[RMDB]
The record gives the reactivity of an RNA of 177 nucleotides to 2A3 and DMS. Conditions: 150 mM KOAc, 10 mM MgCl2 and 150 mM bicine (pH 8.5), 24 C. Source: RMDB libraries RFM100 and RFMREP, as collected in RNAgym. Values cover nucleotides 27 to 126.
RNA sequence: GGGAACGACUCGAGUAGAGUCGAAAAUAAGCGAAGGUACUAGCUAUUUUGUGAGUUCCUCGGGCACUAUCAAAAACACAUGCCCAAUAAAGAAAGUCAAUAGCGACGUUAGGAGAGCCUAGCGGUCCCACAGACAAAAAUUCGUUUUUGUCUGUGGAAAAGAAACAACAACAACAAC
Reactivity to 2A3 in 0.01 (KOAc 150mM, MgCl2 10mM, bicine 150mM(pH8.5), 24C), signal-to-noise 9, nucleotides 027 to 126: u140a060a030g010c030g070a090a040g150g020u140a080c020u060a050g010c000u000a040u020u040u040u060g150u050g070a100g030u010u010c000c000u020c040g000g010g000c010a010c060u110a080u210c140a080a070a060a120a020c090a020c010a070u070g000c000c010c030a000a020u140a010a040a020g110a040a040a000g070u050c040a030a100u060a050g070c070g060a060c010g030u030u030a020g030g050a210g020a030g130c000c000u010a010g000c010g030g050u030c010
Reactivity to DMS in 0.01 (KOAc 150mM, MgCl2 10mM, bicine 150mM(pH8.5), 24C), signal-to-noise 5, nucleotides 027 to 126: u000a050a120g010c020g000a100a080g010g000u030a080c040u000a240g000c020u000a020u000u000u000u000g010u020g010a130g000u000u000c000c010u010c180g010g000g010c010a040c140u010a090u040c200a080a080a020a090a050c150a120c300a250u020g010c000c010c010a100a070u010a060a100a110g000a050a100a050g000u010c040a050a100u000a050g000c110g000a110c010g000u000u000a020g000g000a280g010a180g020c010c000u000a050g000c020g000g000u000c080